[RMDB]
An RNA of 207 nucleotides, treated with 2A3 and DMS and read out base by base. For 2A3, 1,957 sequencing reads were counted.

RNA sequence: GGGAACGACUCGAGUAGAGUCGAAAAGAGAAUCCAUACUACAAAAGUCACCCAUACAUAUUACAUGUGUAACUUUAAAAUCUGCGGCUAGUCUACCUGCCCACAGAAAUCUUUCAUUGCUUGUUCUUGGUGUGCAAUGAGGGUCACCAAUAACUAAUGCUAUUAUAAUAUUCGUAUUAUAAUAGCAAAAAGAAACAACAACAACAAC
Reactivity to 2A3 in 0.01 (KOAc 150mM, MgCl2 10mM, bicine 150mM(pH8.5), 24C), signal-to-noise 3, nucleotides 027 to 156: g060a010g030a020a000u020c020c000a020u080a100c020u020a010c060a010a090a030a010g020u020c010a040c020c070c000a010u040a030c010a020u150a030u170u180a040c070a070u080g030u010g000u050a040a080c030u070u100u190a040a070a040a080u010c010u040g000c020g010g000c040u060a040g040u060c060u070a100c010c020u020g010c010c000c030a050c010a020g050a010a040a020u050c030u010u090u040c020a030u010u060g020c030u030u060g020u150u030c010u010u070g050g000u040g020u030g040c020a010a030u050g010a030g020g020g020u040c010a000c170c000a010a020u240a020a000c000u150a040a170
Reactivity to DMS in 0.01 (KOAc 150mM, MgCl2 10mM, bicine 150mM(pH8.5), 24C), signal-to-noise 2, nucleotides 027 to 156: g020a250g020a210a190u000c020c030a170u000a160c020u000a070c010a050a090a030a030g010u000c060a300c020c020c040a280u000a070c040a070u000a080u000u020a100c110a300u000g000u010g000u000a010a100c020u010u000u010a050a080a090a160u010c060u000g050c080g010g020c020u000a110g010u000c070u000a100c070c030u010g000c100c020c020a000c030a010g010a030a100a040u000c070u000u000u000c050a100u000u000g000c010u000u000g000u010u000c070u000u000g040g000u000g000u000g000c040a060a060u000g000a080g000g000g010u000c010a000c000c020a040a050u000a070a100c150u010a030a300